[RMDB]
RNA sequence: GGGAACGACUCGAGUAGAGUCGAAAAUUAAUCAAGGACUUCCUGGAGCACUUUCAAAUAGCGCAGGUACGUAUGUAUGUAAUCACGUGCUUUAUCACUUAGGUUAUUUACAAGAUAAGCAUUACCCUACCAGAGUGUUUUUCGAAACACUCUGGUAAAAAGAAACAACAACAACAAC
Reactivity to DMS in 0.01 (KOAc 150mM, MgCl2 10mM, bicine 150mM(pH8.5), 24C), signal-to-noise 3, nucleotides 027 to 126: u000u000a020a140u000c080a130a150g020g010a120c090u000u000c020c020u000g010g000a140g030c040a080c080u000u010u010c190a050a080a110u040a040g040c060g000c030a050g030g000u010a010c060g030u000a080u010g000u000a010u010g020u000a030a030u000c030a130c190g020u010g030c260u000u020u010a060u030c040a040c080u000u010a130g010g000u000u010a030u000u000u000a040c050a060a130g010a080u000a030a090g020c070a050u010u000a070c020c000c030
Reactivity to 2A3 in 0.01 (KOAc 150mM, MgCl2 10mM, bicine 150mM(pH8.5), 24C), signal-to-noise 2, nucleotides 027 to 126: u020u010a010a020u020c020a070a070g070g040a030c010u060u000c000c010u020g020g010a060g030c010a000c060u070u260u170c150a100a100a090u120a140g050c020g000c030a020g020g010u030a050c080g050u080a020u130g020u020a020u050g020u040a030a010u080c030a000c110g030u040g000c000u000u140u070a170u210c010a030c050u040u110a050g020g020u000u070a040u050u060u020a040c030a010a050g040a140u070a110a000g000c000a000u020u070a070c000c000c020
The record gives the reactivity of an RNA of 177 nucleotides to DMS and 2A3.
The 2A3 profile rests on 1,174 reads.
Values cover nucleotides 27 to 126.
The DMS profile rests on 1,604 reads.